[RMDB]
RNA sequence: GGGAACGACUCGAGUAGAGUCGAAAACUGGCGUCGUUCGCGACGCCAGAAAUACUAAGACCGAAGCUUUGAUGGCCGACACUUCCCUUGGGCGCAAAACAAAAACCGGUCUGUUCGCAGACCGGAACUGUCCCUAUAUCUUCGGAUAUAGGGACAGAAAAGAAACAACAACAACAAC
Reactivity to DMS in 0.01 (KOAc 150mM, MgCl2 10mM, bicine 150mM(pH8.5), 24C), signal-to-noise 2, nucleotides 027 to 126: c010u000g010g020c020g050u000c000g030u000u000c170g010c000g030a020c020g010c000c000a010g000a000a050a070u020a170c140u020a100a050g020a120c040c070g020a050a090g020c060u000u000u000g010a110u020g010g020c010c000g010a130c050a100c100u000u000c010c000c020u000u010g010g010g000c020g010c060a040a010a030a050c020a090a050a040a110a040c010c000g000g000u000c000u020g010u010u010c140g020c000a020g010a020c000c000g010g000a020a000
Reactivity to 2A3 in 0.01 (KOAc 150mM, MgCl2 10mM, bicine 150mM(pH8.5), 24C), signal-to-noise 2, nucleotides 027 to 126: c000u010g000g010c000g010u010c010g040u040u070c140g020c010g120a000c000g020c010c010a000g000a000a000a000u120a010c060u080a110a030g020a020c000c050g110a050a010g060c030u130u110u120g110a130u220g150g000c010c000g020a040c040a050c230u000u020c030c000c000u070u160g010g000g000c030g000c040a030a080a030a050c060a000a090a040a060a060c010c010g000g010u010c000u000g000u000u060c200g020c070a000g000a000c000c000g010g010a000a010